[RMDB]
RNA sequence: GGGAACGACUCGAGUAGAGUCGAAAAGCAUGUGGAUACAGUGAUAGAGUUGCCCAGCUCACUUUAGGGAAUUCCAGCAUAACCACUCAAGAAGCAGCUAAUAUAGUGGUAGGUUAUGGAGUGUGGCCAAGGGGUAUAACUCCAGUUGAGGCAACUGAACUGAAUGGGUGUUCGCACCCAUUCAGUUAAAAGAAACAACAACAACAAC
Reactivity to 2A3 in 0.01 (KOAc 150mM, MgCl2 10mM, bicine 150mM(pH8.5), 24C), signal-to-noise 1, nucleotides 027 to 156: g120c050a010u120g000u030g040g100a030u150a180c080a030g050u060g050a030u150a070g070a020g020u000u000g000c000c010c010a020g030c000u050c000a070c150u040u070u220a120g000g080g010a000a040u110u100c050c000a020g020c010a070u010a050a040c000c000a010c000u000c060a110a080g010a130a010g040c090a000g010c000u020a070a000u070a220u040a100g000u020g050g010u000a060g040g000u010u020a010u010g010g000a010g000u010g010u010g060g000c000c090a040a030g030g000g000g040u000a020u070a230a000c050u050c010c040a000g000u030u040g040a080g020g030c070a020a020c000u030g010
Reactivity to DMS in 0.01 (KOAc 150mM, MgCl2 10mM, bicine 150mM(pH8.5), 24C), signal-to-noise 1, nucleotides 027 to 156: g070c040a080u000g070u000g000g010a100u000a140c070a130g000u000g010a060u000a050g040a090g070u010u000g000c000c010c000a200g040c050u000c070a010c010u000u010u030a100g010g000g000a140a100u000u000c030c020a110g040c090a050u000a080a040c040c000a010c020u000c100a180a150g000a100a090g020c050a110g000c060u000a070a100u000a110u000a010g030u000g040g000u010a040g030g000u010u000a100u040g000g000a010g040u000g040u000g000g050c050c020a100a110g010g000g010g010u000a070u010a050a090c010u000c000c000a090g000u000u000g000a150g010g010c040a010a090c030u000g000
The record gives the reactivity of an RNA of 207 nucleotides to 2A3 and DMS. For 2A3, 479 sequencing reads were counted. 2A3 adducts were read by reverse transcription with SuperScript II with manganese.